RNA sequence: GGGAACGACUCGAGUAGAGUCGAAAACAUGGGGAGAGAUGCUAGGAGUGGGGGGCGACCGGAACGAGGAGAAAAGUAAAGAGAGCAACGGGGCUAGCGAGUGGAUGUUCCGCCUCCCCGGGGAGCCAUACAACCCAGUUCGCUGGGUUGAAAAGAAACAACAACAACAAC
Reactivity to 2A3 in 0.01 (KOAc 150mM, MgCl2 10mM, bicine 150mM(pH8.5), 24C), signal-to-noise 6, nucleotides 027 to 129: c070a080u150g010g000g020g000a030g020a010g010a020u110g030c070u100a030g020g000a060g050u110g010g010g000g000g020g010c020g020a020c010c020g010g010a020a010c020g010a020g050g000a020g030a010a080a020a000g090u150a030a060a030g070a000g010a000g000c000a020a080c030g000g000g080g000c040u060a010g060c010g030a030g020u070g020g020a040u100g030u100u020c020c010g000c000c000u030c000c000c000c000g010g000g010g010a010g000c010c010a010u060a090
Reactivity to DMS in 0.01 (KOAc 150mM, MgCl2 10mM, bicine 150mM(pH8.5), 24C), signal-to-noise 5, nucleotides 027 to 129: c100a010u000g000g000g000g000a040g000a070g020a020u040g030c090u030a080g000g000a060g050u030g010g000g000g000g000g000c110g030a020c040c020g020g020a050a050c080g020a060g020g010a060g000a050a050a040a100g040u040a030a040a060g000a080g020a000g020c070a080a020c050g000g030g000g070c040u040a000g020c110g020a080g050u000g000g030a130u040g000u050u000c050c020g020c040c030u030c000c040c010c000g000g030g020g030a060g030c040c040a080u060a140